[RMDB]
RNA sequence: GGGAACGACUCGAGUAGAGUCGAAAAUCGGUUAUGCCGGGAGAUGUAGGUCUAAGGAGGCACACUCGCUCUUGGAACACGUGAGGGUGUAGGUCUAUGUGGGUCACCAUGUCUUCGUGCUCCACCAGUAUGCUGACGUAUUCGUACGUCAGCAUACAAAAGAAACAACAACAACAAC
Reactivity to 2A3 in 0.01 (KOAc 150mM, MgCl2 10mM, bicine 150mM(pH8.5), 24C), signal-to-noise 3, nucleotides 027 to 126: u060c010g030g010u110u080a070u170g030c010c000g030g030g000a060g000a010u070g040u100a030g060g020u000c020u040a060a100g080g030a040g100g000c020a000c010a020c030u030c040g040c010u030c010u060u100g080g040a080a030c040a030c110g090u070g030a030g020g030g000u030g030u050a050g030g030u000c030u040a120u110g060u100g030g000g000u010c000a010c040c010a030u130g060u030c050u030u100c040g020u020g000c010u000c010c000a040c000c010a010
Reactivity to DMS in 0.01 (KOAc 150mM, MgCl2 10mM, bicine 150mM(pH8.5), 24C), signal-to-noise 3, nucleotides 027 to 126: u010c060g010g000u010u010a090u010g030c010c030g010g000g020a080g020a070u000g020u000a050g010g010u000c060u000a110a140g000g000a080g000g030c050a070c050a070c030u000c060g010c020u000c050u030u000g020g000a060a050c110a060c120g030u000g010a080g000g000g020u000g030u000a060g000g010u000c030u000a110u010g010u030g000g000g020u000c040a100c100c050a040u000g000u000c050u010u000c060g010u000g000c020u000c030c040a070c100c130a130